[RMDB]
RNA sequence: GGGAACGACUCGAGUAGAGUCGAAAACCCUAACACGGGAGUCUCGGGCCCCCUCCCAGGAAUGGAGACGGGGGGAAAUCGACCGGGUCCCGCAGAACCCGAUGGAGUCCCCCGCCAUCCCCUGACGUCACAACGUCGUUCGCGACGUUGAAAAGAAACAACAACAACAAC
Reactivity to DMS in 0.01 (KOAc 150mM, MgCl2 10mM, bicine 150mM(pH8.5), 24C), signal-to-noise 4, nucleotides 027 to 129: c000c000c030u030a110a110c170a100c030g060g000g000a050g030u010c050u000c020g000g000g080c040c030c000c010c000u010c030c020c000a050g000g000a120a080u050g020g030a070g030a110c030g000g000g000g000g000g000a010a050a010u000c050g020a080c000c000g020g010g030u010c060c000c100g060c040a080g000a120a070c030c010c020g020a050u000g000g000a000g030u030c010c010c010c000c000g020c030c000a080u000c010c010c020c030u000g010a020c170g020u040c030a110
Reactivity to 2A3 in 0.01 (KOAc 150mM, MgCl2 10mM, bicine 150mM(pH8.5), 24C), signal-to-noise 4, nucleotides 027 to 129: c000c000c020u040a090a010c060a040c130g010g000g010a050g080u020c020u030c030g030g020g010c000c000c000c000c000u020c000c020c000a050g050g040a050a070u180g020g000a070g030a050c040g000g000g000g000g010g010a010a020a040u080c030g050a030c020c000g000g000g010u010c020c030c020g020c010a020g060a070a010c000c000c010g030a020u030g040g000a010g040u030c010c000c000c000c000g000c000c000a080u000c000c000c000c030u030g040a060c060g090u090c040a030

About this RNA:
Structure probing data (DMS and 2A3) for a 170-nucleotide construct. The DMS profile rests on 27,838 reads. The 2A3 profile rests on 16,206 reads. Values are in units of 0.01, from 0 to 300, in steps of 10. For 2A3 the reverse transcriptase was SuperScript II with manganese.